[RMDB]
RNA sequence: GGGAACGACUCGAGUAGAGUCGAAAAGAUAUGGAUGGCGCGAAACUAUUACUUCGUUGAUCUCGGAAACGAGGGAGAAGUGGGUAGGAGCCAUCCUAAGUCAAACGCGUCACUUCGGUGACGCGAAGUCUCAUCCUAUGUUCGCAUAGGAUGAGACAAAAGAAACAACAACAACAAC
Reactivity to 2A3 in 0.01 (KOAc 150mM, MgCl2 10mM, bicine 150mM(pH8.5), 24C), signal-to-noise 2, nucleotides 027 to 126: g040a010u060a030u140g000g010a000u000g000g010c040g000c090g170a210a090a020c020u030a020u090u080a010c010u000u000c030g300u300u010g000a010u030c010u000c010g040g000a070a090a050c010g010a000g000g000g010a040g000a010a010g000u080g130g070g010u030a020g000g050a020g000c010c000a000u000c000c000u000a030a000g010u000c050a070a050a090c030g000c000g000u000c000a010c010u030u090c300g180g000u010g000a000c000g000c000g000a010a000
Reactivity to DMS in 0.01 (KOAc 150mM, MgCl2 10mM, bicine 150mM(pH8.5), 24C), signal-to-noise 2, nucleotides 027 to 126: g000a040u000a300u000g000g010a000u010g000g000c000g030c070g020a090a110a150c010u000a010u000u020a020c000u000u000c000g020u000u010g010a030u000c000u000c010g020g010a090a070a160c000g010a020g010g020g000a020g000a010a000g030u010g010g010g000u000a010g000g000a130g020c000c010a000u010c010c000u020a030a100g010u010c040a070a060a150c020g010c000g020u000c000a010c000u000u020c230g030g000u010g000a010c000g010c000g000a010a030